This 207-nucleotide RNA was probed chemically with DMS and 2A3. 2A3 adducts were read by reverse transcription with SuperScript II with manganese. It was measured as part of the RMDB library OK3TST. DMS adducts were read by reverse transcription with MarathonRT. Values cover nucleotides 27 to 156. The DMS profile rests on 1,860 reads. The RNA was probed in 150 mM KOAc, 10 mM MgCl2 and 150 mM bicine (pH 8.5) at 24 C.

RNA sequence: GGGAACGACUCGAGUAGAGUCGAAAAGUCGUAGCGGUUCACGGUCACGCCGGCGCCCACUACCACGAACCCGCCAGGAGUCAGUACGUGGGCAGUAUUCAGAUCACCCAUGCGGAAGCCAUGGUCGCACAGCGCCAUGUCGGCUGCGUUGCAGCGGUAGCGUCUUAAGGUUCGCCUUAAGACGCUAAAAAGAAACAACAACAACAAC
Reactivity to DMS in 0.01 (KOAc 150mM, MgCl2 10mM, bicine 150mM(pH8.5), 24C), signal-to-noise 1, nucleotides 027 to 156: g000u000c100g020u000a090g000c020g040g050u000u010c000a080c000g050g020u040c040a030c130g010c000c040g010g020c090g010c300c000c000a040c020u000a080c000c010a020c040g020a090a060c010c000c050g080c070c110a160g020g050a100g020u000c020a110g010u000a040c080g030u010g000g010g060c000a080g010u020a160u000u020c150a100g010a100u000c000a100c050c000c060a130u000g020c050g020g000a110a150g000c110c020a130u000g000g020u000c000g070c020a080c030a100g000c010g040c020c030a080u010g000u000c030g030g000c020u000g000c040g020u010u010g000c010a050g000c020g000g030
Reactivity to 2A3 in 0.01 (KOAc 150mM, MgCl2 10mM, bicine 150mM(pH8.5), 24C), signal-to-noise 1, nucleotides 027 to 156: g060u040c100g000u010a010g030c060g060g010u100u090c100a030c140g010g010u030c010a000c080g040c030c000g000g070c020g050c030c010c000a020c020u020a000c000c020a050c170g020a040a040c000c000c030g130c140c050a180g000g000a100g070u040c010a020g030u010a110c170g000u040g030g020g000c000a010g040u040a040u020u170c060a000g010a060u060c070a040c050c000c010a010u060g000c030g110g040a100a000g040c000c000a030u020g030g000u190c050g000c040a070c120a140g020c010g000c000c040a040u030g050u050c060g030g040c020u090g010c060g070u050u180g010c030a020g010c010g060g010